An RNA of 177 nucleotides, treated with DMS and 2A3 and read out base by base. The data come from the RNA Mapping Database (RMDB), library M2PK50. Conditions: 150 mM KOAc, 10 mM MgCl2 and 150 mM bicine (pH 8.5), 24 C. The DMS profile rests on 1,166 reads.
[RMDB]
RNA sequence: GGGAACGACUCGAGUAGAGUCGAAAAGCAGUCGACUUCGGUCGACUGCAAAGAAUCACCACCAGCAGGUGAAAGCUGGAGGCAAAGAGCCAAAAUAUAUAAAAACGCUGAGCUUCGGCUCAGCGAAGAUGGCACUAAUAUUCGUAUUAGUGCCAUCAAAAGAAACAACAACAACAAC
Reactivity to DMS in 0.01 (KOAc 150mM, MgCl2 10mM, bicine 150mM(pH8.5), 24C), signal-to-noise 2, nucleotides 027 to 126: g000c000a010g000u000c000g030a020c000u000u010c200g060g010u000c010g000a000c000u000g010c010a010a050a090g020a180a160u020c130a110c000c030a220c020c000a000g000c000a090g020g030u030g000a110a020a100g000c010u000g010g010a080g000g000c050a040a060a090g000a160g010c040c070a080a060a090a140u010a030u010a140u010a050a040a120a100a160c000g010c010u000g000a020g010c000u000u020c130g030g000c000u000c020a000g000c000g070a020a030
Reactivity to 2A3 in 0.01 (KOAc 150mM, MgCl2 10mM, bicine 150mM(pH8.5), 24C), signal-to-noise 2, nucleotides 027 to 126: g020c000a000g000u010c020g030a010c060u110u160c260g090g000u000c010g010a000c000u010g020c000a000a020a010g000a040a080u120c080a040c090c010a020c010c010a000g000c020a020g080g190u210g270a090a020a040g000c000u020g000g040a060g010g000c050a170a150a120g080a090g040c010c020a060a030a020a010u180a010u010a010u060a050a180a020a010a000c020g000c000u010g030a010g000c000u030u050c300g080g000c000u000c000a000g000c000g010a000a000